[RMDB]
RNA sequence: GGGAACGACUCGAGUAGAGUCGAAAACAGAAAGCGGCGGGCCAUUAUAGCGAGGCGUUGCCCCAUAGCGACGAUUACCAUAUGUGGCUGCGUCUGGCGUUGCGGGGGCGGGUGGCUGCGCUGGACACUACUAAUGGCUGUUCGCAGCCAUUAGUAGAAAAGAAACAACAACAACAAC
Reactivity to 2A3 in 0.01 (KOAc 150mM, MgCl2 10mM, bicine 150mM(pH8.5), 24C), signal-to-noise 3, nucleotides 027 to 126: c030a020g100a070a130a020g090c020g040g000c020g010g020g040c010c010a040u100u130a090u180a100g050c060g050a030g050g030c030g030u020u050g000c000c000c020c030a020u050a030g040c060g100a120c050g070a130u070u240a120c020c050a030u030a020u080g020u040g050g050c050u080g010c010g000u030c000u030g130g000c010g030u050u170g040c050g010g030g000g010g020c040g000g030g000u010g000g010c030u160g040c020g000c000u010g000g020a000c010a020
Reactivity to DMS in 0.01 (KOAc 150mM, MgCl2 10mM, bicine 150mM(pH8.5), 24C), signal-to-noise 4, nucleotides 027 to 126: c080a110g010a100a120a090g000c050g010g000c040g000g000g010c010c020a040u010u010a090u010a110g010c030g000a030g010g000c010g000u000u010g010c010c010c020c050a040u000a050g010c080g020a050c110g010a170u010u010a200c100c070a080u000a010u010g000u000g010g010c000u010g000c000g000u000c020u000g000g010c030g010u000u000g030c080g020g000g010g010g020c100g010g000g010u000g000g010c040u000g010c030g020c020u000g000g010a130c150a150